The data come from the RNA Mapping Database (RMDB), library OK1LIB.
Chemical mapping of a 177-nucleotide RNA with 2A3 and DMS.
Reactivities are given for positions 27 through 126.

[RMDB]
RNA sequence: GGGAACGACUCGAGUAGAGUCGAAAAGUGCCGAACCGGUAGCCGUACUCGUCGUAGUCCUUCUGUUUCCAGCCCGACCCGAUACCCAGGAUGAGCCGGCCGCCGGAGAUGUGGUCGACGGUACGGGCAGUGGGAAACUUUUCGAAGUUUCCCACUGAAAAGAAACAACAACAACAAC
Reactivity to 2A3 in 0.01 (KOAc 150mM, MgCl2 10mM, bicine 150mM(pH8.5), 24C), signal-to-noise 8, nucleotides 027 to 126: g100u080g040c010c010g040a070a060c010c020g030g030u030a030g050c000c000g050u070a080c040u050c060g040u020c030g060u050a040g110u110c020c010u090u110c060u090g050u010u060u000c020c000a010g010c000c010c000g040a060c010c000c000g030a030u100a130c020c010c020a020g100g020a060u080g030a020g040c030c010g020g000c010c010g040c010c010g080g010a060g010a030u140g090u140g060g020u020c000g020a030c020g000g000u080a080c010g000g010g000
Reactivity to DMS in 0.01 (KOAc 150mM, MgCl2 10mM, bicine 150mM(pH8.5), 24C), signal-to-noise 6, nucleotides 027 to 126: g020u020g020c030c000g010a120a080c060c020g000g010u000a060g000c030c010g010u010a050c020u010c020g010u000c030g000u010a080g000u010c040c040u010u030c090u010g010u000u010u000c010c020a080g010c000c000c010g000a080c040c010c020g000a150u020a070c040c010c040a120g000g020a080u010g010a090g020c300c020g000g010c020c030g010c020c010g000g030a030g010a080u030g000u020g000g010u010c030g010a240c190g000g000u010a060c010g000g000g020
For DMS the reverse transcriptase was MarathonRT.
Conditions: 150 mM KOAc, 10 mM MgCl2 and 150 mM bicine (pH 8.5), 24 C.